Structure probing data (2A3 and DMS) for a 177-nucleotide construct. Reactivities are given for positions 27 through 126. For 2A3 the reverse transcriptase was SuperScript II with manganese. The RNA was probed in 150 mM KOAc, 10 mM MgCl2 and 150 mM bicine (pH 8.5) at 24 C.
[RMDB]
RNA sequence: GGGAACGACUCGAGUAGAGUCGAAAAUGUGGUUCCCUGUCUUUGGACACGUAAGAAUUGGAGGAAAAUAAAUGUGGAUUUGGGAAACUUUGAGGCCAGCUUGCUUCUUGCAGGCUCAUGAUCAACCGGAACUACCUUAAUUCGUUAAGGUAGUUCCAAAAGAAACAACAACAACAAC
Reactivity to 2A3 in 0.01 (KOAc 150mM, MgCl2 10mM, bicine 150mM(pH8.5), 24C), signal-to-noise 6, nucleotides 027 to 126: u150g040u050g050g050u010u010c000c000c000u000g030u000c020u040u090u180g080g010a050c040a020c080g080u120a040a040g030a150a110u100u070g030g010a060g040g120a060a010a050a050u230a030a100a060u170g030u060g040g040a070u020u050u100g020g000g010a040a090a050c020u040u050u100g040a030g000g040c020c000a000g010c020u020u030g020c020u040u120c010u070u230g000c020a000g000g040c020u030c010a050u090g040a030u080c040a020a060c030c020
Reactivity to DMS in 0.01 (KOAc 150mM, MgCl2 10mM, bicine 150mM(pH8.5), 24C), signal-to-noise 8, nucleotides 027 to 126: u020g010u010g010g010u000u000c010c010c010u020g010u000c010u000u020u020g010g010a050c040a060c160g010u000a090a080g010a090a090u010u000g010g000a080g010g000a060a060a090a070u010a050a060a060u010g020u000g000g010a080u000u000u000g010g000g010a070a060a070c090u000u000u000g010a080g010g000c090c140a040g000c020u000u010g000c020u010u030c210u000u010g010c020a040g000g000c010u000c080a030u010g020a090u010c070a060a110c260c130